[RMDB]
RNA sequence: GGGAACGACUCGAGUAGAGUCGAAAAUAGAUCCAUGCUGUCCUAGUCUUUUGACUAGGCUCUGAUGUCGAUCUGCUCCAAGACAUCUUUGAGCGACAGCCGCGGAGCAGAUUUUGGAUCUAGAAAAGGGUUUCAGCAAGUUCGCUUGCUGGGACCCAAAAGAAACAACAACAACAAC
Reactivity to 2A3 in 0.01 (KOAc 150mM, MgCl2 10mM, bicine 150mM(pH8.5), 24C), signal-to-noise 9, nucleotides 027 to 126: u040a000g000a000u000c000c000a040u080g010c020u050g040u120c000c000u000a000g010u000c030u030u290u150u300g010a000c010u000a000g000g000c000u000c000u030g020a020u080g090u110c060g010a030u000c010u010g000c000u000c010c010a050a030g040a050c020a110u050c050u060u090u150g080a070g030c050g040a050c060a060g050c020c020g040c060g010g000a010g000c010a000g000a000u070u050u010u020g000g000a000u000c000u000a010g070a010a080a010a010
Reactivity to DMS in 0.01 (KOAc 150mM, MgCl2 10mM, bicine 150mM(pH8.5), 24C), signal-to-noise 8, nucleotides 027 to 126: u010a010g010a010u000c000c000a050u010g000c120u010g000u020c000c010u000a000g000u000c000u010u020u020u040g020a010c010u010a010g010g000c060u020c050u010g010a080u020g020u020c170g000a050u000c010u000g020c000u000c010c010a080a300g010a060c060a180u010c040u010u020u030g010a110g010c110g010a070c130a090g010c040c050g010c300g010g000a020g000c010a010g000a020u000u000u010u000g000g000a010u000c000u000a010g010a050a080a080a110
The data come from the RNA Mapping Database (RMDB), library OK1LIB. The record gives the reactivity of an RNA of 177 nucleotides to 2A3 and DMS. The RNA was probed in 150 mM KOAc, 10 mM MgCl2 and 150 mM bicine (pH 8.5) at 24 C. For 2A3 the reverse transcriptase was SuperScript II with manganese.